Chemical mapping of a 207-nucleotide RNA with 2A3. The data come from the RNA Mapping Database (RMDB), library ARCHII.
RNA sequence: GGGAACGACUCGAGUAGAGUCGAAAAUGGUUUCGACAGGCAUUUAUAACCUUAUAAUGCAGUAGUUUGGCAGACUAUAAUGCUACUAGGCGUUUCAAUAAACGGAACAAAAAAACAAGAAAAUGACUAUCAAGAUUUAAUGAUUAGUCAAAAUCUAUCUAUUGCAUAGCUUCGGCUAUGCAAUAGAAAAAGAAACAACAACAACAAC
Reactivity to 2A3 in 0.01 (KOAc 150mM, MgCl2 10mM, bicine 150mM(pH8.5), 24C), signal-to-noise 1, nucleotides 027 to 156: u060g020g000u030u030u130c050g000a000c000a020g000g000c010a020u000u000u010a200u060a150a090c000c000u130u040a130u020a160a000u000g030c000a020g010u050a000g000u000u000u000g030g000c090a000g020a000c000u000a040u100a290a060u100g000c000u030a050c020u050a030g020g010c030g070u060u050u170c110a120a080u130a170a110a060c050g010g000a000a020c060a000a120a070a000a000a000a000c080a000a080g050a020a080a000a000u000g000a000c000u000a000u000c000a030a030g100a300u060u300u300a150a120u100g000a020u080u210a000g020u000c000a000a000a100a040u010c000u000a030